[RMDB]
RNA sequence: GGGAACGACUCGAGUAGAGUCGAAAAAAGUGAUUAUUCGUAAUCACUUCACGCCGGGCGCGGUGGCCCGUGCCUGUAGUCCCAGCUACUCGGGAGGCUAAACGACGUACCCGUUCGCGGGUACGAACUUACUGCUUUCGUUCGCGAAAGCAGUAAGAAAAGAAACAACAACAACAAC
Reactivity to DMS in 0.01 (KOAc 150mM, MgCl2 10mM, bicine 150mM(pH8.5), 24C), signal-to-noise 1, nucleotides 027 to 126: a000a000g030u000g000a010u000u000a040u010u020c180g010u000a020a000u000c000a000c000u000u000c100a170c140g030c050c000g040g010g000c020g020c020g010g030u000g020g000c220c000c030g000u000g000c010c000u010g010u000a120g010u000c020c020c020a110g010c040u000a020c030u000c080g000g000g010a120g000g000c060u000a010a060a140c090g030a240c010g000u000a000c000c000c000g010u000u000c140g000c000g000g000g000u000a000c000g000a010a090
Reactivity to 2A3 in 0.01 (KOAc 150mM, MgCl2 10mM, bicine 150mM(pH8.5), 24C), signal-to-noise 1, nucleotides 027 to 126: a000a040g000u010g000a000u010u030a020u040u110c240g020u060a000a000u020c000a000c000u040u020c020a050c020g080c040c000g000g010g010c000g000c030g090g050u060g110g080c040c010c010g010u020g020c000c000u030g040u090a030g040u000c010c000c000a020g050c030u080a050c010u060c080g070g040g030a020g010g030c070u080a070a060a060c050g070a010c000g020u000a000c030c040c030g000u000u040c300g000c030g000g020g010u000a000c000g000a000a000
Overview: The record gives the reactivity of an RNA of 177 nucleotides to DMS and 2A3. The DMS profile rests on 1,296 reads. DMS adducts were read by reverse transcription with MarathonRT.